[RMDB]
RNA sequence: GGGAACGACUCGAGUAGAGUCGAAAACAGGUUGCAAAAGCAGUUCUGAUGACAACUGUCCUCCCUUGGGACCCAUAGGAGUUGUGGGUAAUGACUCAACAGACUCAUCUUUUAACUACAACACGGACUAAGGAAUAGACAUCUUCUGCUUUAGUAACACUGAUAUGCCUUUCGAGGCAUAUCAGUGAAAAGAAACAACAACAACAAC
Reactivity to 2A3 in 0.01 (KOAc 150mM, MgCl2 10mM, bicine 150mM(pH8.5), 24C), signal-to-noise 5, nucleotides 027 to 156: c040a010g080g020u040u070g010c040a050a000a010a020g000c000a010g010u160u060c120u160g010a030u030g040a040c050a150a030c130u070g060u120c010c030u110c020c000c000u050u020g110g010g040a240c020c000c020a100u100a130g110g020a100g060u010u000g010u020g030g010g030u050a090a090u130g030a040c010u020c100a100a110c060a190g050a060c040u030c040a120u020c090u020u150u070u160a100a080c040u080a010c020a080a010c020a010c080g030g020a000c010u050a010a040g030g020a040a070u110a100g040a030c010a020u000c000u060u020c000u010g000c000u030u020u020a030g020u030a060a020
Reactivity to DMS in 0.01 (KOAc 150mM, MgCl2 10mM, bicine 150mM(pH8.5), 24C), signal-to-noise 2, nucleotides 027 to 156: c010a100g000g000u000u000g020c030a080a030a070a110g010c000a040g010u000u000c100u010g030a130u000g010a190c150a040a030c030u000g020u010c020c030u010c010c020c020u000u040g050g020g010a180c030c010c030a170u000a090g030g020a170g020u000u000g020u010g020g030g000u000a010a060u000g000a100c040u000c040a160a270c200a160g010a060c100u000c030a080u010c040u050u010u030u000a040a040c010u000a050c030a070a020c010a140c070g000g000a300c020u010a060a040g030g000a080a080u000a020g010a060c010a080u000c060u010u030c020u000g010c010u000u000u000a130g030u000a090a130
The data come from the RNA Mapping Database (RMDB), library OK3TST. Chemical mapping of a 207-nucleotide RNA with 2A3 and DMS. Reactivities are given for positions 27 through 156. For DMS the reverse transcriptase was MarathonRT. Conditions: 150 mM KOAc, 10 mM MgCl2 and 150 mM bicine (pH 8.5), 24 C. The DMS profile rests on 2,981 reads.